Chemical mapping of a 207-nucleotide RNA with 2A3 and DMS.
In probing experiments dimethyl sulfate is read out at A N1 and C N3, which are open when not base-paired.
The reactions ran in a buffer of 150 mM KOAc, 10 mM MgCl2 and 150 mM bicine (pH 8.5), at 24 C.
[RMDB]
RNA sequence: GGGAACGACUCGAGUAGAGUCGAAAACGGCGAGACAGAAUCGAUGUUUUCGCUGGAAUAUCUAAACGACAUCACGCGCCCGAUUGGGAGCGACACCGCCGUAACGGUCGACCUCGGCAGCGAGAUGCCAGUGAAAAUGCACUUCGAGACCGGCGGCCAGUACGCUUACUUUCGAGUAAGCGUACUGAAAAGAAACAACAACAACAAC
Reactivity to 2A3 in 0.01 (KOAc 150mM, MgCl2 10mM, bicine 150mM(pH8.5), 24C), signal-to-noise 4, nucleotides 027 to 156: c020g000g010c000g000a000g010a010c010a020g130a140a250u280c120g070a110u100g080u020u090u080u050c010g000c000u000g000g060a060a030u120a080u090c120u170a060a120a020c030g090a030c030a110u100c070a060c060g010c010g000c000c000c010g080a150u300u300g030g000g000a010g060c030g050a060c060a050c020c020g020c010c000g000u060a130a080c000g030g010u000c010g030a060c000c020u110c030g030g000c040a030g050c010g130a070g020a090u060g000c000c010a020g020u050g100a040a070a010a030u210g060c030a040c090u060u070c070g050a060g000a020c000c000g000g000c000g000g000c000
Reactivity to DMS in 0.01 (KOAc 150mM, MgCl2 10mM, bicine 150mM(pH8.5), 24C), signal-to-noise 1, nucleotides 027 to 156: c010g020g030c010g000a020g010a050c010a060g020a200a280u010c140g030a210u000g010u000u000u000u000c020g080c000u020g030g010a170a110u010a140u030c020u010a020a080a090c020g040a090c040a070u010c100a140c000g000c030g020c010c000c020g020a230u000u000g010g000g000a000g000c010g000a170c030a030c040c020g020c010c010g030u010a070a120c030g020g000u000c030g010a090c030c030u010c040g020g030c040a050g000c060g010a210g010a260u000g000c050c140a060g030u000g010a090a050a080a110u030g030c010a040c040u000u010c010g010a220g000a100c080c000g010g000c000g000g000c010
The data come from the RNA Mapping Database (RMDB), library OK3TST. Values cover nucleotides 27 to 156.